[RMDB]
RNA sequence: GGGAACGACUCGAGUAGAGUCGAAAACGCGUCCUGUUCGCAGGACGCGAAUUAAGGAAACCUUCCUGGUGGCGAGAAUAAAUGACCACUCGCGCUCAUAAAAUAGGUGGGCGUUCGCGCCCACCAAUGACACAUUGGUAUUCGUACCAAUGUGUCAAAAAGAAACAACAACAACAAC
Reactivity to DMS in 0.01 (KOAc 150mM, MgCl2 10mM, bicine 150mM(pH8.5), 24C), signal-to-noise 2, nucleotides 027 to 126: c030g020c030g010u000c000c010u000g030u000u020c160g030c040a030g010g000a010c030g030c000g030a010a010u010u010a090a070g010g000a050a110a150c050c050u010u000c000c010u000g040g030u000g000g010c010g020a030g000a150a130u010a040a080a080u010g000a090c180c150a110c010u000c040g010c020g000c040u000c120a110u020a060a070a100a100u020a080g020g020u010g000g000g040c000g040u000u000c130g010c010g030c010c010c000a000c010c010a020a010
Reactivity to 2A3 in 0.01 (KOAc 150mM, MgCl2 10mM, bicine 150mM(pH8.5), 24C), signal-to-noise 1, nucleotides 027 to 126: c010g000c000g010u020c010c000u010g040u040u040c280g000c070a000g000g000a010c000g000c000g010a000a000u080u030a040a030g050g020a070a050a090c020c000u020u020c000c000u010g010g060u020g130g000c030g030a040g080a030a040u140a190a130a140u190g120a110c030c010a040c010u000c000g010c020g010c020u030c060a110u150a150a260a120a040u230a150g000g010u000g020g030g000c030g010u010u040c160g030c010g050c000c000c000a000c020c000a000a000
About this RNA
Chemical mapping of a 177-nucleotide RNA with DMS and 2A3. The RNA was probed in 150 mM KOAc, 10 mM MgCl2 and 150 mM bicine (pH 8.5) at 24 C. DMS adducts were read by reverse transcription with MarathonRT. Source: RMDB library M2PK50, as collected in RNAgym.